An RNA of 170 nucleotides, treated with DMS and 2A3 and read out base by base. The RNA was probed in 150 mM KOAc, 10 mM MgCl2 and 150 mM bicine (pH 8.5) at 24 C. High 2A3 reactivity points to a flexible backbone, as in loops and unpaired stretches. The DMS profile rests on 34,086 reads. 2A3 adducts were read by reverse transcription with SuperScript II with manganese.
RNA sequence: GGGAACGACUCGAGUAGAGUCGAAAAGAUGUUCCCCAGCCAGGGAUUUUCAUCCUCGAGUCUCUUGAUGGUCUUUCUGGCCUUCCGGAGGUCUCUCUCGAGCUCCUCUGCCUUUCUUCUUGUGGAGUCCACCCAGUCUUCGGACUGGGUAAAAGAAACAACAACAACAAC
Reactivity to DMS in 0.01 (KOAc 150mM, MgCl2 10mM, bicine 150mM(pH8.5), 24C), signal-to-noise 6, nucleotides 027 to 129: g040a110u060g000u020u000c020c010c020c030a030g020c030c030a070g030g030g040a070u040u030u050u060c030a000u000c050c060u010c060g030a090g000u030c000u000c020u010u010g010a050u030g000g000u010c000u010u070u040c190u060g000g000c000c000u030u010c020c050g000g000a060g040g030u060c050u030c080u040c020u010c030g040a080g000c060u000c030c010u030c070u030g030c000c000u010u040u010c020u040u000c030u040u130g070u020g030g000a000g020u000c020c190
Reactivity to 2A3 in 0.01 (KOAc 150mM, MgCl2 10mM, bicine 150mM(pH8.5), 24C), signal-to-noise 9, nucleotides 027 to 129: g060a040u140g030u030u020c010c000c000c010a020g090c040c020a030g010g030g020a020u070u060u080u160c030a050u050c010c020u020c020g040a040g060u020c010u010c000u020u030g020a030u040g020g000u000c010u040u230u060c160u190g040g000c010c000u030u020c010c030g030g020a020g020g050u010c010u000c000u000c010u000c010g010a020g010c010u030c010c010u010c010u020g020c000c000u010u050u020c000u030u010c010u170u300g010u010g020g010a000g010u000c010c020